[RMDB]
RNA sequence: GGGAACGACUCGAGUAGAGUCGAAAAGAUAUGGACGACGGAGGACUAUGAAGCGUAACAUCACUCGGAAACGAGUGUGGUGGAGUCUUAAGUCGUCCUAAGUCAAAGCAGGACUUCGGUCCUGCAACAUCCCAAAAAGCUUCGGCUUUUUGGGAUGAAAAGAAACAACAACAACAAC
Reactivity to 2A3 in 0.01 (KOAc 150mM, MgCl2 10mM, bicine 150mM(pH8.5), 24C), signal-to-noise 2, nucleotides 027 to 126: g020a030u070a040u130g020g000a010c010g000a000c000g080g050a050g020g030a020c010u060a210u300g060a040a000g000c040g060u140a080a040c020a180u300c000a020c020u000c000g000g050a060a070a060c030g000a000g000u000g000u000g040g000u020g000g040a030g000u000c030u030u000a020a010g010u000c010g000u000c000c000u020a000a000g000u000c010a020a120a020g000c010a010g000g000a010c000u050u120c300g160g000u000c020c000u000g000c000a000a000
Reactivity to DMS in 0.01 (KOAc 150mM, MgCl2 10mM, bicine 150mM(pH8.5), 24C), signal-to-noise 2, nucleotides 027 to 126: g010a040u000a300u010g000g010a020c000g010a060c010g010g030a100g010g010a000c010u010a190u020g000a080a200g000c030g000u010a050a080c140a050u000c000a020c010u020c000g000g000a100a100a210c000g010a010g010u000g040u000g000g010u000g010g000a030g000u000c000u000u000a140a100g020u000c000g010u000c000c000u000a030a040g000u000c070a100a100a160g010c000a000g000g020a020c000u000u010c200g040g000u000c000c000u000g000c000a060a080

This 177-nucleotide RNA was probed chemically with 2A3 and DMS. Conditions: 150 mM KOAc, 10 mM MgCl2 and 150 mM bicine (pH 8.5), 24 C. The 2A3 profile rests on 2,623 reads. For 2A3 the reverse transcriptase was SuperScript II with manganese. High DMS reactivity at an A or C suggests that its Watson-Crick edge is free. It was measured as part of the RMDB library TTRDEL. The DMS profile rests on 1,673 reads. DMS adducts were read by reverse transcription with MarathonRT.